This 177-nucleotide RNA was probed chemically with DMS and 2A3. The 2A3 profile rests on 1,245 reads. Source: RMDB library OK2TRN, as collected in RNAgym. Conditions: 150 mM KOAc, 10 mM MgCl2 and 150 mM bicine (pH 8.5), 24 C.
[RMDB]
RNA sequence: GGGAACGACUCGAGUAGAGUCGAAAAGUCGCCGCGUCGACAUCAACGCCCAGCGCGGGCGAGGGAUGCGUCCUACGGGGGUGACCCAUUCGCCGGCAUGGUAGAGGACGGCAAGAUUGCCGCGACGCGGUCGAGCGUCAUUCGUGACGCUCGACCGAAAAGAAACAACAACAACAAC
Reactivity to DMS in 0.01 (KOAc 150mM, MgCl2 10mM, bicine 150mM(pH8.5), 24C), signal-to-noise 1, nucleotides 027 to 126: g010u000c090g010c030c030g000c020g000u010c020g000a200c100a060u000c100a070a220c080g000c060c000c020a080g000c100g020c040g020g010g000c000g000a040g000g000g000a040u000g000c050g000u000c000c000u010a060c230g010g010g010g000g050u010g000a090c040c000c070a190u010u010c020g030c010c000g000g000c040a080u010g010g020u000a210g000a130g000g010a260c030g010g000c070a040a170g010a090u020u000g000c030c050g000c020g020a010c010g030
Reactivity to 2A3 in 0.01 (KOAc 150mM, MgCl2 10mM, bicine 150mM(pH8.5), 24C), signal-to-noise 1, nucleotides 027 to 126: g050u040c000g000c050c000g050c010g000u000c000g000a050c020a030u080c040a080a070c050g070c000c000c070a060g050c300g040c060g200g000g010c000g000a050g010g060g000a020u080g160c020g130u080c030c000u050a130c200g120g050g000g020g070u000g050a050c070c000c020a100u060u090c020g030c010c000g130g000c070a110u080g000g020u020a020g040a070g120g050a020c030g020g040c000a030a030g100a300u150u220g010c010c000g000c000g000a010c020g000